[RMDB]
RNA sequence: GGGAACGACUCGAGUAGAGUCGAAAAGAGUUCGUGUACACGUACGUGUGAGUUCGUGAUCUCACGUGUACACUCGAUCGUGUUCGAACGUUCGAGAACGAUCGUUCACUCGAUCGAACACGAGUACUCGUACGAACUCGAUCUCGUUCACGAACUCCCGGUUUCAACGGUUCGCCGUUGAAACCGGAAAAGAAACAACAACAACAAC
Reactivity to 2A3 in 0.01 (KOAc 150mM, MgCl2 10mM, bicine 150mM(pH8.5), 24C), signal-to-noise 1, nucleotides 027 to 156: g000a000g000u000u020c030g020u030g090u090a020c030a020c160g050u090a050c100g040u110g050u080g040a000g000u000u080c060g020u080g060a150u040c140u040c090a000c000g000u000g010u000a020c030a040c000u010c020g000a000u020c020g000u000g040u060u140c100g000a010a000c030g000u010u000c050g010a070g040a300a080c130g010a050u030c030g000u000u070c050a020c020u020c000g000a000u060c010g010a050a000c000a010c030g010a010g060u080a040c090u020c000g040u000a020c000g000a010a000c000u010c020g010a060u010c000u000c010g040u030u040c000a010c000g000a000a000c000u010c000

Record summary:
Structure probing data (2A3) for a 207-nucleotide construct. The 2A3 profile rests on 894 reads. The reactions ran in a buffer of 150 mM KOAc, 10 mM MgCl2 and 150 mM bicine (pH 8.5), at 24 C.